[RMDB]
The record gives the reactivity of an RNA of 177 nucleotides to DMS and 2A3. The reactions ran in a buffer of 150 mM KOAc, 10 mM MgCl2 and 150 mM bicine (pH 8.5), at 24 C. For DMS, 939 sequencing reads were counted. Values are in units of 0.01, from 0 to 300, in steps of 10. The 2A3 profile rests on 1,404 reads.
RNA sequence: GGGAACGACUCGAGUAGAGUCGAAAAGAUAUGGAAUGCGAAGAACCUACCCACCACACAUUCGGAAACGAAUGAUGUGAGGGGGAGCAUUCCUAAGUCAAAACGGAAUGACUUCGGUCAUUCCGAAUCGACAAACCAAGUUCGCUUGGUUUGUCGAAAAAGAAACAACAACAACAAC
Reactivity to DMS in 0.01 (KOAc 150mM, MgCl2 10mM, bicine 150mM(pH8.5), 24C), signal-to-noise 2, nucleotides 027 to 126: g020a120u000a190u000g000g010a040a000u000g010c020g020a140a160g040a060a190c030c040u000a130c020c000c020a300c020c010a020c000a000c000a030u040u000c010g000g010a060a050a140c020g030a000a020u000g000a060u010g020u010g010a280g020g000g000g000g010a040g010c000a040u000u000c000c000u010a040a100g000u000c150a080a080a120a150c020g000g000a020a000u010g000a020c000u000u010c190g000g000u000c000a000u000u000c000c000g030a010a040
Reactivity to 2A3 in 0.01 (KOAc 150mM, MgCl2 10mM, bicine 150mM(pH8.5), 24C), signal-to-noise 1, nucleotides 027 to 126: g070a000u100a090u170g000g000a000a020u000g020c010g080a300a020g090a170a150c050c010u050a130c010c000c000a080c080c000a010c010a000c000a000u010u000c000g020g020a050a070a120c020g030a010a000u020g050a120u000g000u000g030a110g020g000g030g010g090a010g020c020a000u000u000c010c000u000a100a020g160u090c140a060a010a120a190c030g000g030a000a010u000g000a000c000u010u100c300g000g010u000c000a000u000u000c000c000g000a000a020